[RMDB]
RNA sequence: GGGAACGACUCGAGUAGAGUCGAAAAUCCUAAGUCACACGGAGUACGUAGUUCAAUGACGUGGGAUUGUCAGCUAUCGGAAACGAUAGCUUGGAUUUAUCCCAUAAGACAGAACUAUGAAACGUGUGAUAUGGAAAAAGUGACGUUCGCGUCACAAGCAGAGUUAUACUUUCGAGUAUAACUCUGCAAAAGAAACAACAACAACAAC
Reactivity to DMS in 0.01 (KOAc 150mM, MgCl2 10mM, bicine 150mM(pH8.5), 24C), signal-to-noise 1, nucleotides 027 to 156: u000c010c010u000a110a240g010u010c000a000c010a020c000g050g050a180g020u000a200c240g060u000a010g000u010u000c010a210a150u000g030a110c140g000u010g010g020g010a010u000u000g000u000c000a030g020c020u010a000u010c000g010g010a170a180a300c010g000a010u010a000g030c000u000u000g000g030a050u000u010u000a030u010c000c000c000a010u010a050a170g020a270c020a120g030a010a030c010u000a020u010g000a120a110a180c010g000u000g020u020g010a020u000a060u010g000g020a020a090a110a090a080g020u000g020a020c010g020u000u010c260g020c050g020u000c000a000c000a030a300
Reactivity to 2A3 in 0.01 (KOAc 150mM, MgCl2 10mM, bicine 150mM(pH8.5), 24C), signal-to-noise 6, nucleotides 027 to 156: u020c000c000u030a110a030g020u000c000a010c000a000c000g010g000a020g030u020a010c110g000u000a010g000u010u010c110a220a200u150g040a060c070g000u010g000g000g000a010u000u020g000u000c010a000g000c000u000a000u010c000g050g030a110a040a060c010g010a000u000a000g000c000u000u060g030g000a000u160u140u210a020u010c000c000c000a010u030a020a010g070a030c040a030g120a030a000c000u010a010u160g010a020a020a000c000g000u000g000u000g000a000u010a040u020g010g060a040a070a030a040a020g010u020g000a000c020g030u050u110c280g040c000g110u000c000a000c000a000a000